[RMDB]
Chemical mapping of a 177-nucleotide RNA with DMS and 2A3. Reactivities are given for positions 27 through 126. It was measured as part of the RMDB library OK2TRN. For DMS, 1,306 sequencing reads were counted. For 2A3, 1,104 sequencing reads were counted. Conditions: 150 mM KOAc, 10 mM MgCl2 and 150 mM bicine (pH 8.5), 24 C.
RNA sequence: GGGAACGACUCGAGUAGAGUCGAAAAUCUGUUUACAAGUUAUCGUUAAGUCCAUGUCUGACAACGAUUCCGUAAACAGAAGCCAGUUUGCGUCAUGUCCGACAUGGACUCUUGGCAGAACUGAUCAGCUAAUCCAUAGCUUCGGCUAUGGAUUAGCAAAAGAAACAACAACAACAAC
Reactivity to DMS in 0.01 (KOAc 150mM, MgCl2 10mM, bicine 150mM(pH8.5), 24C), signal-to-noise 2, nucleotides 027 to 126: u010c010u010g010u000u000u000a100c020a080a060g000u000u020a040u010c220g000u020u000a100a050g000u000c000c070a020u000g020u000c030u010g020a020c020a030a090c090g010a100u000u000c220c010g020u000a010a000a000c010a050g000a050a080g030c100c130a070g000u000u000u000g020c020g000u000c070a080u000g000u000c020c060g000a060c040a040u010g010g020a000c020u000c000u000u000g000g000c010a150g010a020a110c050u000g000a070u010c090a060
Reactivity to 2A3 in 0.01 (KOAc 150mM, MgCl2 10mM, bicine 150mM(pH8.5), 24C), signal-to-noise 1, nucleotides 027 to 126: u010c000u010g030u020u000u070a070c060a030a020g020u080u060a170u150c100g070u070u200a160a020g000u030c010c010a010u010g000u080c050u020g030a000c000a220a050c050g030a060u190u000c050c030g000u010a000a000a000c000a020g130a050a010g110c010c030a030g000u030u000u040g010c000g070u030c030a010u030g020u000c030c020g010a070c030a040u010g000g000a020c030u020c010u050u030g020g010c000a000g020a060a050c070u060g030a140u090c060a010